[RMDB]
RNA sequence: GGGAACGACUCGAGUAGAGUCGAAAAGAUAUGGACGAUCCCACGACAUGCGUACGGAUCGGAAACGAUCCGGUACGCAACAGCGUGGAUCGUCCUAAGUCAAAGUGAACGGCUUCGGCCGUUCACAGUAACUUUUCAUCUUCGGAUGAAAAGUUACAAAAGAAACAACAACAACAAC
Reactivity to DMS in 0.01 (KOAc 150mM, MgCl2 10mM, bicine 150mM(pH8.5), 24C), signal-to-noise 2, nucleotides 027 to 126: g000a020u000a150u010g000g010a030c000g000a020u010c190c060c040a020c010g000a010c130a160u000g000c010g020u000a020c000g000g000a020u000c000g010g020a020a020a050c000g010a030u010c000c000g000g030u000a000c000g010c000a020a020c140a190g000c000g000u000g010g000a030u000c000g020u000c000c000u000a000a020g000u000c010a110a090a130g030u000g000a020a000c000g000g010c000u000u010c220g010g000c000c000g000u000u000c000a000c000a070
Reactivity to 2A3 in 0.01 (KOAc 150mM, MgCl2 10mM, bicine 150mM(pH8.5), 24C), signal-to-noise 1, nucleotides 027 to 126: g000a000u020a000u040g020g010a010c000g000a000u110c160c150c000a030c010g080a040c050a230u300g000c000g010u010a000c010g000g000a000u000c000g000g000a000a030a000c000g000a000u030c030c010g010g000u020a000c000g080c000a010a020c020a010g010c000g020u000g000g000a000u000c000g010u000c000c000u000a000a000g010u010c030a070a080a100g010u000g000a000a000c020g020g060c030u140u180c300g140g000c010c000g020u000u000c000a000c000a000